[RMDB]
RNA sequence: GGGAACGACUCGAGUAGAGUCGAAAAGAUAUGGAUGUACCAGAGUAUUUGACUCGUUGAAACAACGCUAAUCGGAAACGAUUAGCGUUGUGGAGAGUCUUAUACGACGAAGGUACAUCCUAAGUCAGAUAUUACUACCGUUCGCGGUAGUAAUAUCAAAAGAAACAACAACAACAAC
Reactivity to 2A3 in 0.01 (KOAc 150mM, MgCl2 10mM, bicine 150mM(pH8.5), 24C), signal-to-noise 2, nucleotides 027 to 126: g040a010u110a040u160g000g000a000u000g000u010a000c000c000a020g030a000g050u010a020u000u020u020g000a000c000u010c030g100u230u050g000a030a030a000c010a010a000c000g000c010u000a000a000u000c000g060g000a130a090a080c020g000a000u010u000a010g000c000g010u010u000g010u000g010g000a010g000a010g000u000c010u000u010a020u000a040c220g220a090c090g120a160a100g000g020u000a000c010a000u020c000c000u000a060a000g080u010c040a010
Reactivity to DMS in 0.01 (KOAc 150mM, MgCl2 10mM, bicine 150mM(pH8.5), 24C), signal-to-noise 4, nucleotides 027 to 126: g010a050u000a300u000g000g000a030u000g020u000a020c010c010a110g020a270g020u000a010u000u000u000g000a010c000u000c000g010u000u010g030a300a140a000c000a000a020c000g020c020u010a000a010u000c010g000g000a140a100a180c010g010a010u000u000a000g000c010g010u000u000g000u000g000g000a060g010a010g010u000c000u000u000a000u000a010c000g000a140c300g000a150a090g000g000u000a010c000a000u000c000c000u000a010a090g000u000c040a160